RNA sequence: GGGAACGACUCGAGUAGAGUCGAAAAAGGUCCGACGGUGAGGGACGAAAGCUAGGGGCACGAACCGGAUUAGAUACCCGGGUAGUCCUAGCCGUAAACGAUGCCCGCUAGGUGUCACGACGGUCGUACCACCGUGGUGAUUCGUCACCACGGUGGUAAAAGAAACAACAACAACAAC
Reactivity to 2A3 in 0.01 (KOAc 150mM, MgCl2 10mM, bicine 150mM(pH8.5), 24C), signal-to-noise 2, nucleotides 027 to 126: a000g020g060u000c000c000g020a040c010g010g010u060g020a120g000g060g000a060c010g040a190a130a040g010c010u000a000g000g010g010g070c200a000c010g000a000a000c020c000g000g020a050u060u100a020g100a150u170a080c000c000c000g000g040g000u120a000g000u000c010c000u000a000g010c000c000g010u030a010a010a010c080g070a070u100g010c000c020c000g100c000u010a010g120g000u090g080u080c020a000c030g010a010c010g010g020u020c020g000u030
Reactivity to DMS in 0.01 (KOAc 150mM, MgCl2 10mM, bicine 150mM(pH8.5), 24C), signal-to-noise 1, nucleotides 027 to 126: a150g000g020u000c050c010g050a040c080g030g020u000g020a160g000g040g010a060c000g000a040a150a080g000c000u000a010g000g000g040g000c280a080c070g000a100a290c000c060g000g000a020u020u080a100g000a120u000a160c040c020c080g000g080g020u070a100g010u040c050c000u000a200g000c020c050g000u020a110a080a030c110g000a020u000g050c130c030c070g000c080u000a040g000g030u000g030u000c000a020c140g010a050c060g010g000u000c090g030u000